[RMDB]
RNA sequence: GGGAACGACUCGAGUAGAGUCGAAAAUAGUAGCCUGAAAGGUGCUUUGCGCGACUAUAAACAAUGACGAAGCUUAAAUGCUAGUGAAGACAGUGUUCGCACUGAAUAAUCUUUGCAAAACCAUCGAAUUGCGGGGACGCCCUUAGAGCUUCACGUACGGACAUCUUAAGUUCGCUUAAGAUGUCCGAAAAGAAACAACAACAACAAC
Reactivity to 2A3 in 0.01 (KOAc 150mM, MgCl2 10mM, bicine 150mM(pH8.5), 24C), signal-to-noise 1, nucleotides 027 to 156: u070a000g030u020a020g030c010c010u160g090a180a050a030g010g000u010g060c020u140u140u010g020c070g000c010g010a020c000u000a020u140a300a050a050c080a000a080u120g080a030c000g020a000a000g000c000u020u080a080a000a000u180g010c020u020a020g010u000g050a010a000g000a010c020a010g000u000g030u060u160c130g000c060a000c020u030g030a100a030u150a120a040u060c020u000u020u060g000c000a070a070a000a040c020c040a000u030c060g110a220a100u130u120g000c000g010g000g000g000a020c040g050c000c030c000u050u050a090g040a000g040c000u110u010c020a000c020g020u010a040